[RMDB]
RNA sequence: GGGAACGACUCGAGUAGAGUCGAAAAAUAGCCAUUGCAAGGUAUACCGGGACAGCAUUUCGGAUAGAACGACAUGCAGCCAGGGCACAGCCAUCUAUUCCGCCACCAGAAAAGAGCGCGUCUAGGAGUUUGGCGAUUUCAAAGUCCACACGUCUCAAACAUGAGAAGAGUUCGCUCUUCUCAUGUUAAAAGAAACAACAACAACAAC
Reactivity to DMS in 0.01 (KOAc 150mM, MgCl2 10mM, bicine 150mM(pH8.5), 24C), signal-to-noise 1, nucleotides 027 to 156: a020u010a140g050c020c000a100u000u020g030c030a100a070g060g030u000a100u020a050c010c010g000g000g020a090c040a110g020c010a300u000u000u020c000g050g000a230u000a110g010a090a230c060g000a050c020a110u000g000c050a100g000c040c050a100g030g010g020c060a030c090a080g010c020c010a130u000c030u010a130u000u000c000c000g000c000c070a040c040c010a150g010a060a050a060a110g000a100g000c000g000c020g000u020c040u000a110g050g010a080g010u000u000u000g020g020c090g010a190u000u000u070c050a000a090a090g020u020c020c000a050c020a010c300g000u000c000u000c010a210
Reactivity to 2A3 in 0.01 (KOAc 150mM, MgCl2 10mM, bicine 150mM(pH8.5), 24C), signal-to-noise 2, nucleotides 027 to 156: a000u050a010g030c000c010a030u010u150g050c020a090a060g030g050u080a060u050a140c030c020g020g000g030a030c040a040g020c010a030u000u040u030c070g060g010a100u080a180g130a170a060c020g010a010c000a040u050g010c010a000g020c040c000a010g000g000g000c050a020c040a040g030c010c010a010u000c040u060a070u050u030c020c030g000c000c030a000c030c010a050g120a200a110a040a020g060a040g010c060g000c070g050u000c030u030a040g010g040a060g080u030u030u020g030g000c030g020a000u050u130u060c060a070a080a010g060u050c050c000a020c020a010c050g060u010c050u040c070a100

This 207-nucleotide RNA was probed chemically with DMS and 2A3. The data come from the RNA Mapping Database (RMDB), library OK3TST. The reactions ran in a buffer of 150 mM KOAc, 10 mM MgCl2 and 150 mM bicine (pH 8.5), at 24 C.